[RMDB]
RNA sequence: GGGAACGACUCGAGUAGAGUCGAAAAAAUGUACCAAAAUAUCCUAAUAAUGCAAUUGUAUGCAGGUUUGACACACGUGUGCAUUCUGAGUUCAAUUUGCCAGGUUGUGAUGGCGGUAGUUUGUAUGGAGGAUACUGGUUCGCCAGUAUCAAAAGAAACAACAACAACAAC
Reactivity to 2A3 in 0.01 (KOAc 150mM, MgCl2 10mM, bicine 150mM(pH8.5), 24C), signal-to-noise 9, nucleotides 027 to 129: a000a000u220g030u080a060c010c000a010a000a010a010u120a050u090c010c020u090a110a070u140a150a040u180g020c010a000a000u050u050g020u070a040u060g050c060a020g030g080u040u030u060g120a090c020a010c010a000c090g150u150g000u030g160c020a030u030u020c000u020g060a050g040u000u040c040a010a080u040u050u130g010c040c030a020g040g050u060u040g050u050g020a030u020g040g020c040g010g020u020a060g010u010u030u110g150u070a170u060g050g060a070g050
Reactivity to DMS in 0.01 (KOAc 150mM, MgCl2 10mM, bicine 150mM(pH8.5), 24C), signal-to-noise 9, nucleotides 027 to 129: a060a060u030g000u000a100c020c060a060a050a060a080u000a060u020c000c040u000a090a090u070a090a070u020g020c000a030a040u030u030g020u000a060u040g020c040a070g000g000u000u020u010g000a110c010a030c040a030c220g020u060g030u000g030c010a050u020u020c030u000g020a170g000u020u040c030a040a050u010u050u040g030c060c120a070g000g000u020u010g010u000g020a090u010g000g000c120g010g020u000a020g030u000u000u000g030u000a060u000g020g010a100g000
An RNA of 170 nucleotides, treated with 2A3 and DMS and read out base by base. DMS adducts were read by reverse transcription with MarathonRT. For 2A3 the reverse transcriptase was SuperScript II with manganese. Source: RMDB library 15KLIB, as collected in RNAgym. The RNA was probed in 150 mM KOAc, 10 mM MgCl2 and 150 mM bicine (pH 8.5) at 24 C. For DMS, 62,375 sequencing reads were counted.